Description:
Source: RMDB library 15KLIB, as collected in RNAgym. This 170-nucleotide RNA was probed chemically with DMS and 2A3. For 2A3 the reverse transcriptase was SuperScript II with manganese. The reactions ran in a buffer of 150 mM KOAc, 10 mM MgCl2 and 150 mM bicine (pH 8.5), at 24 C.
RNA sequence: GGGAACGACUCGAGUAGAGUCGAAAAGUACAGCUGAUCAAGAGACUUAUGGUGGAGCUUCAGUGUGUCUCUAUUGCCGUGCGCAUAUAGAACAUCCUGAUGUCUCUGGUGUUUGUAAAUAUAAGGGAGAGCUUCUCGUUCGCGAGAAGCAAAAGAAACAACAACAACAAC
Reactivity to DMS in 0.01 (KOAc 150mM, MgCl2 10mM, bicine 150mM(pH8.5), 24C), signal-to-noise 4, nucleotides 027 to 129: g000u000a000c060a060g020c040u020g000a060u020c030a060a030g020a050g000a050c030u040u000a000u040g030g060u020g000g000a000g000c040u000u000c010a060g000u030g020u020g040u010c130u020c010u040a020u050u000g020c010c060g050u040g060c130g000c040a070u090a020u000a030g000a060a020c000a050u030c150c010u040g020a020u040g020u000c020u020c010u040g040g010u020g000u010u020u000g040u040a060a060a060u060a090u070a070a070g000g000g020a080g030a130
Reactivity to 2A3 in 0.01 (KOAc 150mM, MgCl2 10mM, bicine 150mM(pH8.5), 24C), signal-to-noise 5, nucleotides 027 to 129: g110u110a060c030a040g020c020u040g010a070u050c020a010a000g040a000g020a030c010u040u050a030u110g100g040u100g020g010a000g020c000u010u000c000a010g000u000g000u000g000u040c010u000c000u120a000u000u010g020c000c050g240u220g120c210g000c040a030u070a000u000a240g010a000a000c000a000u050c010c000u000g000a000u010g090u040c000u000c000u010g000g030u040g020u020u130u050g090u020a060a100a030u150a030u060a070a080g080g030g010a070g000a000